RNA sequence: GGGAACGACUCGAGUAGAGUCGAAAAGACUUACAAGAACAGCGACAAGGUUCAUGCAUUUUUCGUAGGUCUCACACCCAUUCUCAAGGCGCCUGGUCAAGCCAUUAACUGGUUGGUCGAGCAGCUUGUGAAGUUGUGGGAUAAGCUGAAAAUGUUCUCAGUGAUAGGACUUCGGUCCUAUCACUGAAAAAGAAACAACAACAACAAC
Reactivity to 2A3 in 0.01 (KOAc 150mM, MgCl2 10mM, bicine 150mM(pH8.5), 24C), signal-to-noise 2, nucleotides 027 to 156: g010a000c030u050u110a040c070a090a170g010a110a060c050a020g070c060g150a080c090a080a050g040g010u000u070c020a050u130g000c010a000u020u050u050u020u080c090g050u190a090g270g100u000c000u030c000a030c000a000c020c080c000a140u000u000c000u000c000a010a290g290g040c000g000c000c020u060g000g030u000c000a010a040g110c010c000a070u190u060a130a110c190u000g000g000u000u020g000g000u010c000g000a030g000c030a030g030c000u010u020g000u000g020a020a010g030u000u040g000u000g000g010g020a080u060a080a080g030c050u080g060a000a050a000a000u160g000u260u130c000

Annotation: Chemical mapping of a 207-nucleotide RNA with 2A3. The reactions ran in a buffer of 150 mM KOAc, 10 mM MgCl2 and 150 mM bicine (pH 8.5), at 24 C. 2A3 adducts were read by reverse transcription with SuperScript II with manganese. Reactivities are rounded to 0.1 and cut off at 0 and 3.